[RMDB]
RNA sequence: GGGAACGACUCGAGUAGAGUCGAAAAGUGGAGGGCUUUUAUUUUUUCCCAAAAGAAAGCAAGUAAUGUUAGAGCAAUAAUUCUAGUAUCCGAAUUAGUCUUAUCCCUUGGCUCGCUCUAACGUUAUCUAUUAUGUCAUGUUCGCAUGACAUAAUAGAAAAGAAACAACAACAACAAC
Reactivity to DMS in 0.01 (KOAc 150mM, MgCl2 10mM, bicine 150mM(pH8.5), 24C), signal-to-noise 2, nucleotides 027 to 126: g030u010g030g010a020g020g020g000c010u000u010u000u000a010u010u000u020u020u010u020c010c010c010a100a050a100a170g010a080a090a070g010c060a150a120g010u000a050a030u000g000u010u000a020g000a010g010c000a090a090u000a010a040u000u000c010u000a100g000u000a080u010c240c180g010a070a040u000u000a020g010u000c020u000u000a040u000c010c020c020u000u000g000g000c020u000c060g000c000u000c000u000a010a010c010g020u000u000a060u000
Reactivity to 2A3 in 0.01 (KOAc 150mM, MgCl2 10mM, bicine 150mM(pH8.5), 24C), signal-to-noise 2, nucleotides 027 to 126: g010u030g040g040a030g020g020g000c020u030u000u030u050a110u080u200u070u030u060u120c000c020c040a000a050a010a010g080a030a020a000g000c100a080a030g110u100a110a100u100g000u010u000a010g010a010g000c010a020a040u010a020a010u020u000c010u020a030g040u050a130u080c100c050g080a110a020u010u010a020g010u000c010u010u020a050u050c010c000c010u000u040g040g000c000u000c050g000c010u000c000u000a010a000c020g010u000u020a040u000
Background:
The record gives the reactivity of an RNA of 177 nucleotides to DMS and 2A3. The RNA was probed in 150 mM KOAc, 10 mM MgCl2 and 150 mM bicine (pH 8.5) at 24 C. Reactivities are given for positions 27 through 126. For 2A3 the reverse transcriptase was SuperScript II with manganese. The DMS profile rests on 2,068 reads.